[RMDB]
RNA sequence: GGGAACGACUCGAGUAGAGUCGAAAAGAGGAGGGCGGAAAAAGAGGAGCGGGCCUCCCGAUCCGAGGGGCCCGGUGGCCUGAUCUGGAGGGCACUCCGGGCCGUAAGGAAGAAAAGCACCCAGAGGAAGCUCACGGAUUCGUCCGUGAGAAAAGAAACAACAACAACAAC
Reactivity to 2A3 in 0.01 (KOAc 150mM, MgCl2 10mM, bicine 150mM(pH8.5), 24C), signal-to-noise 7, nucleotides 027 to 129: g050a010g010g010a000g000g020g020c040g020g010a080a050a010a020a000g050a030g010g000a010g020c040g010g010g010c000c010u030c000c010c000g050a100u030c030c020g020a050g040g050g000g000c000c000c000g010g010u020g010g000c000c000u060g030a120u050c040u070g070g030a060g030g010g000c050a100c130u000c010c000g000g010g010c020c000g020u020a020a000g020g020a010a030g030a010a030a000a000g040c020a040c040c010c020a020g010a020g030g020a040a010g010
Reactivity to DMS in 0.01 (KOAc 150mM, MgCl2 10mM, bicine 150mM(pH8.5), 24C), signal-to-noise 8, nucleotides 027 to 129: g020a060g000g010a020g010g000g000c190g050g000a030a050a060a060a000g020a040g010g010a080g000c060g020g020g000c070c000u000c000c000c000g030a030u010c070c050g000a240g000g010g000g010c030c010c000g010g030u000g000g010c000c000u000g000a140u040c090u050g000g010a220g000g000g000c040a100c050u020c000c010g030g000g010c030c000g000u020a020a120g000g000a050a060g010a060a030a060a090g030c080a120c040c020c020a070g020a060g020g000a050a060g000